[RMDB]
RNA sequence: GGGAACGACUCGAGUAGAGUCGAAAAGAUAUGGAUCCCAUCCAGACAUGAUAUUGGUUCGGAAACGAACCAUUAUCAACAGCUGGUGGGAUCCUAAGUCAAACGCUGCGCCUUCGGGCGCAGCGAACAAUUCAUGAUUCUUCGGAAUCAUGAAUUGAAAAGAAACAACAACAACAAC
Reactivity to 2A3 in 0.01 (KOAc 150mM, MgCl2 10mM, bicine 150mM(pH8.5), 24C), signal-to-noise 1, nucleotides 027 to 126: g040a030u050a020u020g020g010a030u020c000c010c020a020u200c100c000a010g000a100c170a300u300g000a000u000a010u030u020g020g020u000u000c000g050g010a030a010a010c020g010a010a000c090c030a000u010u000a000u000c000a010a100c180a070g030c010u000g000g000u000g000g000g030a000u000c000c010u000a010a010g010u000c000a010a040a140c080g030c070u000g030c060g040c070c000u080u200c300g150g070g140c060g080c010a000g030c000g000a000a000
Reactivity to DMS in 0.01 (KOAc 150mM, MgCl2 10mM, bicine 150mM(pH8.5), 24C), signal-to-noise 1, nucleotides 027 to 126: g000a010u000a030u030g000g000a020u000c000c000c000a010u010c010c000a020g010a020c250a080u000g000a000u010a000u010u020g000g020u000u000c000g020g000a000a030a030c000g020a010a000c000c000a000u000u000a000u000c010a090a080c220a140g000c020u030g000g030u000g000g000g000a000u010c000c000u000a010a050g000u000c020a210a230a250c040g010c020u000g070c000g010c000c030u000u010c290g050g050g090c070g000c020a020g050c020g020a060a050
An RNA of 177 nucleotides, treated with 2A3 and DMS and read out base by base. It was measured as part of the RMDB library TTRDES. Reactivities are given for positions 27 through 126. The 2A3 profile rests on 2,285 reads. The DMS profile rests on 1,586 reads.